An RNA of 207 nucleotides, treated with 2A3 and read out base by base.
It was measured as part of the RMDB library RNAMAK.
The RNA was probed in 150 mM KOAc, 10 mM MgCl2 and 150 mM bicine (pH 8.5) at 24 C.
Reactivities are given for positions 27 through 156.
RNA sequence: GGGAACGACUCGAGUAGAGUCGAAAAGGGGUCAGCGAGUCUCCCAAGGGAGCGAGGAUCAUACUGAAGCCUCCACGGUAUGGGAGCUCCCUCGGGAGACGAUGAGCUGACGGAGGCACCCAAAAGCAGAGAGUUUAGUUCGCUAAACUCUCUGCAAGACAGAGUAGUUCUUCGGAACUACUCUGUCAAAAGAAACAACAACAACAAC
Reactivity to 2A3 in 0.01 (KOAc 150mM, MgCl2 10mM, bicine 150mM(pH8.5), 24C), signal-to-noise 1, nucleotides 027 to 156: g050g020g040g000u010c000a000g000c020g030a080g020u010c000u030c010c010c010a010a010g000g020g000a000g000c000g020a210g030g010a000u010c000a000u000a000c010u040g040a160a020g010c000c010u010c010c000a000c000g000g000u000a000u000g000g000g000a000g010c000u010c020c000c000u000c000g000g000g000a020g000a000c000g000a050u060g010a010g010c010u010g010a010c000g010g020a000g000g020c010a030c010c010c000a050a200a010a000g000c010a000g020a000g000a000g020u000u000u000a020g000u060u110c250g000c190u000a000a000a000c010u020c010u000c010u000g010c010a000a000